[RMDB]
RNA sequence: GGGAACGACUCGAGUAGAGUCGAAAAUUACUAAAAUCUUAACCAUUGAAGCUUCCGGUAUCGCACCUGCAAUCAUGGCUGCACUGCAUUUUGAUGUGCCAUGUUUAUUUGCGAAAAAAGCAAAACCGAUUUUUGAAGGUUUCGACCUUCAAAAAUCAAAAGAAACAACAACAACAAC
Reactivity to 2A3 in 0.01 (KOAc 150mM, MgCl2 10mM, bicine 150mM(pH8.5), 24C), signal-to-noise 4, nucleotides 027 to 126: u130u060a100c080u110a040a080a120a180u110c070u130u110a040a050c050c030a080u030u160g100a120a010g010c000u060u020c020c010g070g000u060a070u140c050g010c040a040c030c020u060g000c090a030a140u110c000a030u010g040g030c020u080g000c030a010c070u060g070c180a250u120u110u080u090g270a280u050g030u010g030c000c000a000u040g030u000u050u020a140u010u010u000g000c000g100a130a000a020a020a060a060g010c050a020a010a010a070c070c060
Reactivity to DMS in 0.01 (KOAc 150mM, MgCl2 10mM, bicine 150mM(pH8.5), 24C), signal-to-noise 1, nucleotides 027 to 126: u020u020a080c110u010a080a020a060a080u010c080u030u070a200a110c020c080a080u000u010g030a060a140g010c090u020u020c050c010g030g020u070a080u000c050g010c000a070c100c020u000g000c040a050a010u000c020a010u000g000g050c060u010g000c020a000c070u050g000c110a130u040u030u000u010g000a110u010g020u000g020c040c000a030u000g000u070u000u080a030u030u000u000g000c040g000a000a040a020a150a230a040g000c050a000a060a050a050c170c090
The data come from the RNA Mapping Database (RMDB), library OK1LIB. The record gives the reactivity of an RNA of 177 nucleotides to 2A3 and DMS. Reactivities are given for positions 27 through 126. 2A3 adducts were read by reverse transcription with SuperScript II with manganese. For DMS, 1,373 sequencing reads were counted. The 2A3 profile rests on 2,029 reads. As a SHAPE reagent, 2A3 marks flexible, mostly unpaired nucleotides at the ribose 2'-OH.